[RMDB]
RNA sequence: GGGAACGACUCGAGUAGAGUCGAAAAGAUAUGGAGGUUGAGUUGUCAGAGUGGGCUCGGAAACGAGCUACACUCUUGGAUUUAUGUAAGCCUCCUAAGUCAAAACACCCUGCUUCGGCAGGGUGAACGAAUGGGGAAUCUUCGGAUUCCCCAUUCGAAAAGAAACAACAACAACAAC
Reactivity to DMS in 0.01 (KOAc 150mM, MgCl2 10mM, bicine 150mM(pH8.5), 24C), signal-to-noise 2, nucleotides 027 to 126: g000a030u000a300u000g000g010a000g010g020u000u000g000a260g000u010u000g000u000c030a010g010a060g050u000g000g010g000c000u000c020g010g010a100a060a200c000g010a000g030c000u000a060c000a000c000u010c000u000u000g020g000a030u020u000u000a010u010g000u000a190a070g010c000c000u000c000c010u000a030a120g000u010c020a110a090a090a200c000a000c010c000c010u000g010c000u000u020c220g020g020c000a000g000g000g050u000g000a000a020
Chemical mapping of a 177-nucleotide RNA with DMS. The RNA was probed in 150 mM KOAc, 10 mM MgCl2 and 150 mM bicine (pH 8.5) at 24 C. The DMS profile rests on 1,288 reads. For DMS the reverse transcriptase was MarathonRT.